[RMDB]
RNA sequence: GGGAACGACUCGAGUAGAGUCGAAAAGAUAUGGAGCGUGAACUACUCCGAUGGAGCCGAAGAACUCGGAAACGAGGGAGGCUCCUAAGGAGCACGCUCCUAAGUCAAAGGCGACUUCGGUCGCCAAUCCCCUUAUGUACUUCGGUACAUAAGGGGAAAAAGAAACAACAACAACAAC
Reactivity to DMS in 0.01 (KOAc 150mM, MgCl2 10mM, bicine 150mM(pH8.5), 24C), signal-to-noise 2, nucleotides 027 to 126: g020a050u000a300u000g000g010a030g010c000g000u000g000a060a050c030u020a300c010u000c020c030g020a300u010g000g000a020g000c000c030g030a080a160g010a150a240c010u000c000g000g000a090a030a150c010g010a030g000g000g000a070g000g020c020u010c000c010u000a000a070g010g060a010g000c010a010c010g000c010u000c000c010u000a000a060g020u000c030a060a140a140g000g010c000g000a000c000u010u020c130g030g010u000c000g020c000c000a030a070
Reactivity to 2A3 in 0.01 (KOAc 150mM, MgCl2 10mM, bicine 150mM(pH8.5), 24C), signal-to-noise 2, nucleotides 027 to 126: g030a010u060a050u120g000g000a000g000c020g020u000g030a120a050c120u210a060c010u300c010c010g000a040u210g000g000a000g010c000c020g090a300a120g030a100a000c000u000c010g010g040a080a070a020c030g000a010g000g000g060a020g010g000c000u000c000c000u000a010a000g000g000a000g020c000a000c000g000c000u010c000c000u000a000a000g010u000c020a040a020a130g000g000c020g000a020c020u050u140c300g100g000u000c000g020c010c010a010a000
An RNA of 177 nucleotides, treated with DMS and 2A3 and read out base by base.
For DMS the reverse transcriptase was MarathonRT.
It was measured as part of the RMDB library TTRDEL.
For DMS, 1,940 sequencing reads were counted.